[RMDB]
RNA sequence: GGGAACGACUCGAGUAGAGUCGAAAAAAUAUGCUCGACAGGCUGCCUGUCCGACAGAGCUUUUAGAUCUUCUGAUCUUUCCCUGCAGCAUAUCGCUUUUGCAUCAAGCGAUUGUCGGAUCACACAAUGACAUAUUUAGCUUCGGCUAAAUAUGUCAAAAAGAAACAACAACAACAAC
Reactivity to DMS in 0.01 (KOAc 150mM, MgCl2 10mM, bicine 150mM(pH8.5), 24C), signal-to-noise 3, nucleotides 027 to 126: a080a040u000a030u000g000c050u000c030g010a140c180a040g000g010c070u000g010c050c140u000g030u000c000c030g020a010c020a070g010a040g000c070u000u000u010u000a010g010a010u000c000u000u020c300u000g000a010u000c000u010u000u000c000c000c000u020g000c080a050g010c020a070u000a050u000c010g010c000u000u000u010u010g010c180a080u010c200a060a000g010c000g000a020u020u000g010u000c020g000g000a120u020c190a080c150a080c210a080a090
Reactivity to 2A3 in 0.01 (KOAc 150mM, MgCl2 10mM, bicine 150mM(pH8.5), 24C), signal-to-noise 1, nucleotides 027 to 126: a000a000u140a010u090g000c030u010c010g080a040c040a020g060g000c010u040g080c000c050u040g080u010c000c000g030a000c010a020g030a010g050c000u020u040u000u040a010g000a020u000c010u270u070c140u300g000a010u000c000u020u000u000c000c000c040u030g030c020a010g000c010a020u020a020u080c010g020c030u020u060u060u160g070c040a100u150c080a080a000g000c000g010a000u020u020g010u010c030g010g040a130u130c000a010c010a010c010a110a220